Description: An RNA of 177 nucleotides, treated with 2A3 and DMS and read out base by base. As a SHAPE reagent, 2A3 marks flexible, mostly unpaired nucleotides at the ribose 2'-OH. The DMS profile rests on 14,774 reads.
[RMDB]
RNA sequence: GGGAACGACUCGAGUAGAGUCGAAAAAAAAUGAGUGCGUGGUAGCACAAACCAGACCAAUCUUCGGCACAUGGUCGCACAAGUACAGCUUCGCCUGUACAAAGCGAACAACAACAUCAACAAGCAACAUAUCUACAAUGUUCGCAUUGUAGAUAUGAAAAGAAACAACAACAACAAC
Reactivity to 2A3 in 0.01 (KOAc 150mM, MgCl2 10mM, bicine 150mM(pH8.5), 24C), signal-to-noise 8, nucleotides 027 to 126: a000a000a000a040u130g000a020g000u020g010c020g010u050g040g080u130a050g040c010a010c010a040a040a020c020c010a010g070a040c010c010a030a070u060c060u130u090c080g050g010c040a030c020a120u080g070g000u020c020g010c010a070c020a130a110g010u010a010c000a000g000c020u140u180c110g040c040c010u000g000u010a000c000a010a040a000g000c010g030a010a010c000a010a010c010a010a010c000a060u110c010a020a050c010a080a020g090c010a020a050
Reactivity to DMS in 0.01 (KOAc 150mM, MgCl2 10mM, bicine 150mM(pH8.5), 24C), signal-to-noise 9, nucleotides 027 to 126: a040a040a070a070u000g000a140g020u000g020c040g020u010g010g010u000a130g020c030a030c050a040a080a090c050c020a110g010a070c040c030a070a070u000c080u000u000c060g010g010c070a060c130a100u000g010g010u000c010g000c040a060c130a100a170g000u000a010c010a010g010c030u010u010c240g010c220c000u000g010u000a020c020a050a090a080g000c010g000a020a040c030a020a050c070a030a040c060a070u000c100a040a040c080a050a080g000c230a040a080